[RMDB]
RNA sequence: GGGAACGACUCGAGUAGAGUCGAAAACGAUCUGUUCGCAGAUCGAGCUACGGAGACGUAGCAAAGCGAGCGAGGGCACGGGCGCUCGCACUACCGGAACUCAAACCAUAUCCACGUGUGCUAGGAUAUGGCCGUGCCCAAAGAAUCAGCACACGAACGGCAUUACUCAUUUCGAUGAGUAAUGCCGAAAAGAAACAACAACAACAAC
Reactivity to 2A3 in 0.01 (KOAc 150mM, MgCl2 10mM, bicine 150mM(pH8.5), 24C), signal-to-noise 1, nucleotides 027 to 156: c010g000a010u000c000u010g040u060u100c210g030c140a020g000a010u010c000g010a030g000c000u000a000c000g040g000a070g030a060c020g000u000a000g000c000a000a090a000g000c000g020a000g000c020g000a040g000g000g000c000a000c000g010g000g050c040g010c010u010c000g000c020a000c020u080a050c020c030g080g070a100a070c070u110c180a100a070a040c020c000a010u010a010u010c000c000a080c080g000u000g000u000g000c000u010a040g010g000a010u000a000u010g000g000c000c000g000u000g000c020c000c000a020a030a020g040a010a080u100c040a010g000c010a000c000a000c010g000a050a030
Notes: An RNA of 207 nucleotides, treated with 2A3 and read out base by base. The 2A3 profile rests on 1,760 reads.